[RMDB]
Conditions: 150 mM KOAc, 10 mM MgCl2 and 150 mM bicine (pH 8.5), 24 C. An RNA of 207 nucleotides, treated with DMS and 2A3 and read out base by base. Reactivities are given for positions 27 through 156.
RNA sequence: GGGAACGACUCGAGUAGAGUCGAAAAAUCAUCGCGCUCGGCGGCGCGUUCCUCGGGCUGCGCGCGGUCGGCAGCACGCUGACGCCGAUCAUCAACCUGUGGAACAGCUUCUUUCAGGUUGUCCGCACUCCGCUGAUCCUGGCGCAGACGGCCGCGAUAGAGCAUACAUGUUCGCAUGUAUGCUCUAAAAAGAAACAACAACAACAAC
Reactivity to DMS in 0.01 (KOAc 150mM, MgCl2 10mM, bicine 150mM(pH8.5), 24C), signal-to-noise 1, nucleotides 027 to 156: a180u010c100a030u000c010g030c000g020c020u000c060g040g020c200g040g050c010g020c030g020u010u010c030c020u000c020g020g000g040c000u010g000c000g000c030g020c060g070g020u000c000g000g000c050a130g050c040a060c070g020c070u010g020a110c010g030c010c020g000a070u000c020a090u000c000a080a040c020c030u000g050u030g000g020a030a100c010a110g020c090u000u000c050u000u010u020c100a060g000g020u000u000g030u010c020c020g030c030a070c030u010c060c020g000c090u000g000a050u010c020c030u000g020g000c000g040c030a130g000a070c010g000g000c010c000g020c040g020a280
Reactivity to 2A3 in 0.01 (KOAc 150mM, MgCl2 10mM, bicine 150mM(pH8.5), 24C), signal-to-noise 3, nucleotides 027 to 156: a000u190c070a030u030c000g030c000g000c010u070c050g100g000c010g020g000c030g000c030g010u000u030c010c000u040c030g030g080g000c030u030g000c020g000c010g000c010g050g000u000c000g020g000c000a020g000c040a030c070g040c070u080g040a140c010g010c000c000g010a070u050c040a030u020c010a040a010c010c000u010g000u040g010g020a060a110c060a100g060c060u070u000c030u020u300u150c040a020g020g000u000u000g000u010c050c000g030c030a040c060u160c090c090g000c020u020g020a020u070c070c120u160g000g000c020g000c000a000g020a090c000g010g000c010c000g010c000g000a020
2A3 adducts were read by reverse transcription with SuperScript II with manganese.